[RMDB]
RNA sequence: GGGAACGACUCGAGUAGAGUCGAAAACUGAACUUCGCUGUUAAUGUAUUCCAACACCUUCGAUGUUGGUUGCUGCGAUAAUAGCUCACCAAAGCUGGCGUCGAUCUCUGCGUUGGUAUCCAGUGGGCCUUAAAGCCUAGUUCGCUAGGCUUUAAGGAAAAGAAACAACAACAACAAC
Reactivity to 2A3 in 0.01 (KOAc 150mM, MgCl2 10mM, bicine 150mM(pH8.5), 24C), signal-to-noise 7, nucleotides 027 to 126: c020u030g030a030a020c010u050u040c030g010c020u030g040u170u110a120a070u200g040u080a110u090u070c000c000a010a010c010a010c020c070u220u220c160g210a260u050g000u020u000g020g000u010u030g000c010u020g020c010g010a000u040a060a050u040a050g020c010u020c020a080c010c020a150a190a000g010c010u000g010g020c010g020u030c020g030a160u050c110u010c030u100g010c010g020u020u020g020g020u060a090u060c010c000a010g020u030g010g030g000
Reactivity to DMS in 0.01 (KOAc 150mM, MgCl2 10mM, bicine 150mM(pH8.5), 24C), signal-to-noise 9, nucleotides 027 to 126: c040u010g010a090a090c120u000u000c030g020c020u000g010u000u010a080a080u010g000u000a050u010u000c010c010a020a010c010a020c040c140u010u010c200g010a080u000g010u000u000g000g000u000u000g010c050u000g000c040g010a060u010a070a220u000a080g010c020u000c060a080c120c100a070a130a140g000c020u000g000g010c160g010u000c080g000a090u000c140u000c060u010g000c040g000u000u000g000g000u000a070u000c110c110a050g020u000g000g000g010